[RMDB]
RNA sequence: GGGAACGACUCGAGUAGAGUCGAAAAGAUAUGGAUGGAGACAUGCACCGAGUCGGAAACGACUCCAGGUGCAACAGCUCUUGUCCUAAGUCAAACUGUCACGUCUUGUUCGCAAGACGUGACAGAACCCAAUAUGAACCUUCGGGUUCAUAUUGGGAAAAGAAACAACAACAACAAC
Reactivity to 2A3 in 0.01 (KOAc 150mM, MgCl2 10mM, bicine 150mM(pH8.5), 24C), signal-to-noise 2, nucleotides 027 to 126: g040a050u070a030u130g000g000a010u020g070g020a010g010a040c100a140u100g000c010a000c040c000g000a000g000u020c010g030g050a120a050a010c000g000a010c000u020c070c080a070g000g000u000g000c020a000a010c010a010g000c020u010c030u080u220g030u000c000c010u020a130a010g070u060c040a030a090a180c030u010g000u000c010a020c010g000u010c010u020u020g040u130u120c240g020c210a000a000g000a010c000g000u020g000a010c000a000g010a000a000
Reactivity to DMS in 0.01 (KOAc 150mM, MgCl2 10mM, bicine 150mM(pH8.5), 24C), signal-to-noise 2, nucleotides 027 to 126: g010a080u030a300u000g000g000a020u000g020g000a020g010a050c100a250u000g000c010a000c040c000g000a040g000u000c000g070g000a080a120a140c010g000a010c000u000c010c150a040g010g000u000g000c000a000a010c230a110g000c010u000c000u000u000g070u000c000c000u010a020a110g000u010c070a080a140a270c000u000g010u000c000a000c010g000u000c000u000u000g000u000u000c160g010c000a010a020g000a010c000g040u000g000a000c000a000g010a000a120